[RMDB]
RNA sequence: GGGAACGACUCGAGUAGAGUCGAAAAACCUCCUACAAAGGCGUGUCUAUGGUUCCCUGUCUUUGGAUACGUAAGAACCGGAGGUAAAGAAAUGUGGACCUGAAGAAAUUUGGGGCCAGCUUGCUCCCCAUGUCGGUAUGUUCGCAUACCGACAUGGAAAAGAAACAACAACAACAAC
Reactivity to 2A3 in 0.01 (KOAc 150mM, MgCl2 10mM, bicine 150mM(pH8.5), 24C), signal-to-noise 1, nucleotides 027 to 126: a010c020c000u000c010c000u030a080c080a080a090a010g200g000c020g010u060g040u010c020u070a180u170g120g040u040u080c010c020c040u020g100u070c080u030u090u100g010g000a010u010a040c030g030u070a110a070g040a110a070c050c030g020g010a020g000g000u010a010a050a000g040a030a090a020u200g000u040g050g000a030c000c000u000g000a020a010g030a030a110a050u020u020u010g010g000g010g030c000c010a010g070c030u000u070g040c020u030c020c030
Reactivity to DMS in 0.01 (KOAc 150mM, MgCl2 10mM, bicine 150mM(pH8.5), 24C), signal-to-noise 3, nucleotides 027 to 126: a050c010c000u000c000c000u000a100c090a060a130a140g010g020c020g020u010g010u000c010u000a060u070g000g020u000u010c000c010c000u010g070u030c120u000u010u040g000g000a020u010a010c020g000u010a090a030g020a110a170c290c270g000g000a000g000g010u000a010a060a050g000a090a110a040u020g020u000g000g040a020c000c000u000g010a000a010g000a100a040a230u000u000u000g000g010g000g000c030c000a020g000c050u000u000g000c060u000c040c020